The record gives the reactivity of an RNA of 177 nucleotides to 2A3 and DMS.
Reactivities are given for positions 27 through 126.
It was measured as part of the RMDB library OK2TST.
For DMS the reverse transcriptase was MarathonRT.
The RNA was probed in 150 mM KOAc, 10 mM MgCl2 and 150 mM bicine (pH 8.5) at 24 C.
RNA sequence: GGGAACGACUCGAGUAGAGUCGAAAAAUGCUUGCUUUAGUUAAAGGAGCUCCUGUACUUCUCAACAUGAAACAAGCUUUGGAAGUAUAUCUUGAUCAUCAAAUUGAUGUUCUUGUUAGAAAAACAAAAUUAGCUUCAAUUUCGAUUGAAGCUAAUUAAAAGAAACAACAACAACAAC
Reactivity to 2A3 in 0.01 (KOAc 150mM, MgCl2 10mM, bicine 150mM(pH8.5), 24C), signal-to-noise 4, nucleotides 027 to 126: a000u060g010c030u020u050g020c000u070u060u060a070g060u130u190a140a020a000g020g000a010g020c030u030c030c040u050g010u070a020c020u060u000c070u010c030a030a060c030a050u160g100a120a120a060c060a080a080g040c040u070u040u020g010g010a020a000g020u020a020u000a020u130c030u010u020g020a000u020c000a000u000c000a010a190a300u180u170g000a010u010g000u020u000c020u030u040g070u030u090a090g120a060a110a040a000a010c030a010a170
Reactivity to DMS in 0.01 (KOAc 150mM, MgCl2 10mM, bicine 150mM(pH8.5), 24C), signal-to-noise 5, nucleotides 027 to 126: a070u010g010c010u010u000g010c010u000u000u000a110g000u010u010a220a060a050g000g010a020g010c080u000c110c090u010g020u000a050c020u000u000c010u000c200a010a040c160a060u020g000a070a080a090c110a060a070g010c090u010u010u000g000g000a050a060g000u000a040u000a040u000c010u000u000g010a020u000c000a010u000c010a070a110a190u000u010g010a010u000g010u000u000c020u000u000g000u000u000a090g010a080a060a090a080a080c100a050a070